Conditions: 150 mM KOAc, 10 mM MgCl2 and 150 mM bicine (pH 8.5), 24 C. Structure probing data (DMS and 2A3) for a 177-nucleotide construct. 2A3 adducts were read by reverse transcription with SuperScript II with manganese. The DMS profile rests on 2,542 reads. Reactivities are rounded to 0.1 and cut off at 0 and 3. The data come from the RNA Mapping Database (RMDB), library TTRDES.
RNA sequence: GGGAACGACUCGAGUAGAGUCGAAAAAAAGAUAUGGAAUUACGGAGGUAUAGCUCGGUGGGUAUCUACCUUCGGAAACGAAGGUAGCCGAGCCCACCCGAGCUGCGAACGUAAUUCCUAAGUCAAACAGAAUAUAAUGCUUCGGCAUUAUAUUCUGAAAAGAAACAACAACAACAAC
Reactivity to DMS in 0.01 (KOAc 150mM, MgCl2 10mM, bicine 150mM(pH8.5), 24C), signal-to-noise 3, nucleotides 027 to 126: a060a070a130g020a030u020a300u010g000g010a020a020u000u000a010c010g010g020a150g010g010u010a080u000a030g010c000u010c020g000g020u000g010g020g020u000a110u000c010u000a010c010c000u000u000c020g010g010a100a110a170c000g010a040a010g000g020u000a020g000c300c150g000a100g000c000c000c000a000c030c070c020g020a000g020c010u000g010c050g000a090a140c020g020u010a000a010u000u000c010c000u000a020a040g010u000c040a100a120a250
Reactivity to 2A3 in 0.01 (KOAc 150mM, MgCl2 10mM, bicine 150mM(pH8.5), 24C), signal-to-noise 1, nucleotides 027 to 126: a020a010a000g050a020u070a050u180g000g010a010a010u030u010a000c000g040g090a080g180g150u300a200u130a290g000c000u000c000g000g000u010g000g000g000u050a060u030c010u000a000c000c000u010u000c000g020g020a050a070a020c030g000a000a010g020g000u000a000g020c000c020g140a090g020c000c020c000a020c010c020c010g000a000g000c000u000g010c000g010a070a000c000g000u000a010a000u000u010c000c010u010a050a040g030u020c030a090a070a050